Overview: This 177-nucleotide RNA was probed chemically with 2A3 and DMS. Conditions: 150 mM KOAc, 10 mM MgCl2 and 150 mM bicine (pH 8.5), 24 C. For 2A3, 1,395 sequencing reads were counted. It was measured as part of the RMDB library VIROID. Reactivities are given for positions 27 through 126.
RNA sequence: GGGAACGACUCGAGUAGAGUCGAAAAUAUCCGACCUGACGAUGGCCCAAAAGGGCCGAAACAGUACUGCGUCAUGCCGAGUUGGGCAUGGGGAGACCAGACGUGAAUUCCUCUGGAUACUCCAACGGUAUGAGAGGUAGUUCGCUACCUCUCAUACAAAAGAAACAACAACAACAAC
Reactivity to 2A3 in 0.01 (KOAc 150mM, MgCl2 10mM, bicine 150mM(pH8.5), 24C), signal-to-noise 2, nucleotides 027 to 126: u100a050u000c000c000g070a020c000c000u040g020a060c040g050a050u160g020g050c000c000c000a200a300a010a180g000g000g000c000c000g000a000a010a000c030a010g010u110a120c040u100g080c040g120u100c000a010u000g000c000c000g180a140g300u260u110g160g030g030c000a000u020g070g000g000g020a040g050a060c000c000a030g000a000c020g020u040g100a150a180u200u080c030c040u000c010u020g000g050a120u100a180c000u070c000c030a000a020c020g090
Reactivity to DMS in 0.01 (KOAc 150mM, MgCl2 10mM, bicine 150mM(pH8.5), 24C), signal-to-noise 3, nucleotides 027 to 126: u000a130u010c020c000g000a110c150c020u000g000a080c060g000a180u010g030g010c000c000c000a130a080a110a140g010g010g030c000c000g020a050a050a050c080a070g020u010a140c140u000g020c080g000u010c000a030u000g000c010c010g020a110g010u010u010g030g010g030c020a030u000g010g000g040g000a020g000a230c010c000a010g000a050c080g010u000g000a190a190u010u010c020c060u000c000u010g000g010a170u010a060c030u010c000c020a080a040c190g000

The DMS profile rests on 2,215 reads. DMS adducts were read by reverse transcription with MarathonRT.